[RMDB]
RNA sequence: GGGAACGACUCGAGUAGAGUCGAAAAGGACUACCCGUCAGGGUUAAGGCCAUACGGACAGCCGGGUCCACUGCCGAAAAGAAAACAAAACAAAACAAAAACAAAACAAAACAAAAACAAAAGAAAAGCAGUAGUUGGACUUCGGUCCAGCUACUGCAAAAGAAACAACAACAACAAC
Reactivity to DMS in 0.01 (KOAc 150mM, MgCl2 10mM, bicine 150mM(pH8.5), 24C), signal-to-noise 1, nucleotides 027 to 126: g000g000a000c090u000a060c000c010c000g000u000c270a040g000g070g000u000u070a110a000g000g000c040c110a060u000a020c000g060g060a060c110a190g000c000c000g000g000g000u010c000c000a090c060u070g000c000c000g070a210a060a070a090g000a060a040a010a090c150a070a030a130a120c220a090a090a020a140c060a100a020a020a140a070c200a130a000a240a000c060a130a000a110a040c240a020a070a000a220a140c050a050a060a070a050g010a070a240a150a050
Reactivity to 2A3 in 0.01 (KOAc 150mM, MgCl2 10mM, bicine 150mM(pH8.5), 24C), signal-to-noise 3, nucleotides 027 to 126: g040g000a020c010u040a040c010c030c000g040u070c120a060g000g010g020u100u070a150a090g050g000c010c000a020u060a030c030g010g020a020c000a010g020c010c000g000g000g000u000c010c000a000c040u020g000c000c050g040a050a090a010a080g160a020a080a030a020c120a020a130a040a000c050a030a060a090a000c110a060a090a060a040a040c050a030a190a020a000c040a020a130a040a000c100a020a090a070a000a020c050a030a110a050a000g200a050a090a050a000
Source information:
An RNA of 177 nucleotides, treated with DMS and 2A3 and read out base by base. The RNA was probed in 150 mM KOAc, 10 mM MgCl2 and 150 mM bicine (pH 8.5) at 24 C. The 2A3 profile rests on 1,542 reads.